The record gives the reactivity of an RNA of 177 nucleotides to DMS and 2A3. For 2A3, 7,737 sequencing reads were counted.

RNA sequence: GGGAACGACUCGAGUAGAGUCGAAAACACCCCGCGUUCGCGCGGGGUGAAACAGGUAGUUGCUAUCUCAAUUACCUGAACAGGCCAUCGUCUGGAUAGCAAAAACUGAUGACUUCGGUCAUCAGAACUUAUUGUUAUCCUUCGGGAUAACAAUAAGAAAAGAAACAACAACAACAAC
Reactivity to DMS in 0.01 (KOAc 150mM, MgCl2 10mM, bicine 150mM(pH8.5), 24C), signal-to-noise 4, nucleotides 027 to 126: c020a020c010c000c000c010g040c000g020u000u020c210g020c020g050c010g010g010g000g020u000g000a000a050a100c020a010g000g000u000a010g010u000u000g010c180u000a080u000c120u010c030a020a040u000u000a010c000c000u010g000a090a120c090a100g000g010c000c060a080u000c080g000u000c090u000g000g000a040u000a040g000c160a080a060a080a100a120c010u000g000a010u000g010a020c000u000u000c170g020g000u000c000a000u000c000a000g010a050a110
Reactivity to 2A3 in 0.01 (KOAc 150mM, MgCl2 10mM, bicine 150mM(pH8.5), 24C), signal-to-noise 5, nucleotides 027 to 126: c010a010c020c010c000c010g010c020g010u020u040c250g010c000g000c000g070g010g030g010u020g000a010a010a000c000a000g000g000u010a010g000u020u030g020c060u110a080u280c040u010c130a020a080u030u010a020c000c000u000g000a030a020c030a030g100g000c020c030a160u100c140g190u070c100u080g090g050a100u090a070g080c070a040a030a040a060a090c000u000g000a000u000g000a000c010u030u060c270g100g000u010c010a000u000c000a000g000a010a020